[RMDB]
RNA sequence: GGGAACGACUCGAGUAGAGUCGAAAAGAUCUCUCUCUUCUAUCGCAUGCGCAGGAGCGGAUACCCACUUGUACGUCUUCCUCCCGGAUAACCUCCACCGACUCUGUGGAACCGCGUUCGGCAACAUAGCUCUAUUCAUGUUCGCAUGAAUAGAGCUAAAAGAAACAACAACAACAAC
Reactivity to 2A3 in 0.01 (KOAc 150mM, MgCl2 10mM, bicine 150mM(pH8.5), 24C), signal-to-noise 5, nucleotides 027 to 126: g070a030u010c020u000c000u010c020u000c040u110u000c030u070a090u090c030g040c100a060u110g030c050g000c050a010g030g070a040g010c030g060g010a040u130a130c000c010c010a020c010u030u090g070u090a030c030g050u000c040u040u010c000c020u020c010c010c000g000g000a040u040a040a060c020c000u030c010c010a040c040c020g070a050c020u010c030u060g040u050g040g030a060a040c030c000g010c010g020u030u030c010g050g020c020a010a020c010a050u070
Reactivity to DMS in 0.01 (KOAc 150mM, MgCl2 10mM, bicine 150mM(pH8.5), 24C), signal-to-noise 2, nucleotides 027 to 126: g020a110u010c010u000c030u000c060u010c010u020u000c030u020a070u020c080g000c060a100u000g010c050g050c040a100g010g000a090g020c100g000g010a110u000a100c090c010c030a110c080u000u020g000u000a050c080g030u000c000u010u000c040c020u000c000c000c040g000g020a080u020a070a070c050c080u010c030c020a090c080c030g010a060c040u000c050u010g000u020g030g020a030a100c040c050g010c020g020u000u020c040g010g040c060a040a020c060a050u000